[RMDB]
RNA sequence: GGGAACGACUCGAGUAGAGUCGAAAAUAGAUACAUUGGACAACAUACUGCUGAUCUGCUGAACGCUGAUAUUCAGAAUCUUCGUGUACUAGCCGAAGCAUAUGCCGUUCUAAAACCAGACAAUCCUACAAUAGGAUUAAUGUCCAAUGGUGUAGGCUACGUUCGUCUUGUUCGCAAGACGAACGUAAAAAGAAACAACAACAACAAC
Reactivity to 2A3 in 0.01 (KOAc 150mM, MgCl2 10mM, bicine 150mM(pH8.5), 24C), signal-to-noise 1, nucleotides 027 to 156: u160a020g030a090u240a020c000a000u000u030g070g000a000c000a060a050c000a040u070a030c080u090g010c000u080g070a250u020c010u030g000c020u030g070a040a000c070g000c020u000g030a020u050a090u240u260c070a050g060a270a040u000c090u070u000c000g010u010g080u180a160c070u200a070g000c000c020g000a000a000g000c000a000u000a010u070g000c030c010g000u020u040c020u040a060a060a180a260c020c000a000g040a070c030a020a010u040c000c030u050a120c110a090a300u030a100g030g000a030u120u060a020a050u050g000u030c000c000a000a000u020g030g000u030g000u010a090g030g000c000